The data come from the RNA Mapping Database (RMDB), library OK1LIB. An RNA of 177 nucleotides, treated with 2A3 and DMS and read out base by base. Reactivities are given for positions 27 through 126. Values are in units of 0.01, from 0 to 300, in steps of 10. The reactions ran in a buffer of 150 mM KOAc, 10 mM MgCl2 and 150 mM bicine (pH 8.5), at 24 C.
[RMDB]
RNA sequence: GGGAACGACUCGAGUAGAGUCGAAAAGAAGGAGAUGAAAGCGACUUUAGAAUCGGCUAACUGAGCAGCCAGAUUCAGACGGCAAGUAUCGUCGCCAGAGAUACAGUCGCAAAUAGCCGUAGGAGAACAUAGCGGUGAGGUUCGCCUCACCGCUAUGAAAAGAAACAACAACAACAAC
Reactivity to 2A3 in 0.01 (KOAc 150mM, MgCl2 10mM, bicine 150mM(pH8.5), 24C), signal-to-noise 3, nucleotides 027 to 126: g170a030a000g080g070a060g020a070u180g100a060a040a000g020c000g020a020c000u110u140u090a060g000a000a010u020c010g000g010c010u040a110a050c070u170g070a020g120c030a000g000c030c030a040g020a030u020u000c020a010g030a010c000g000g000c030a050a030g030u060a050u130c080g080u050c050g070c090c000a000g010a010g010a110u020a050c020a040g000u010c010g000c000a010a130a020u060a010g020c020c000g010u020a010g040g140a060g000a030a000
Reactivity to DMS in 0.01 (KOAc 150mM, MgCl2 10mM, bicine 150mM(pH8.5), 24C), signal-to-noise 3, nucleotides 027 to 126: g020a070a130g010g000a050g000a080u010g000a130a080a150g010c020g020a000c010u010u040u060a050g000a050a010u010c020g020g000c000u000a130a210c120u020g030a080g010c160a000g000c010c020a100g010a010u020u000c020a090g010a110c030g000g030c000a050a080g030u020a100u000c050g020u000c090g000c130c060a110g000a110g000a050u030a060c080a040g000u000c030g000c030a010a080a080u000a180g010c000c040g050u000a140g040g000a110g010a050a190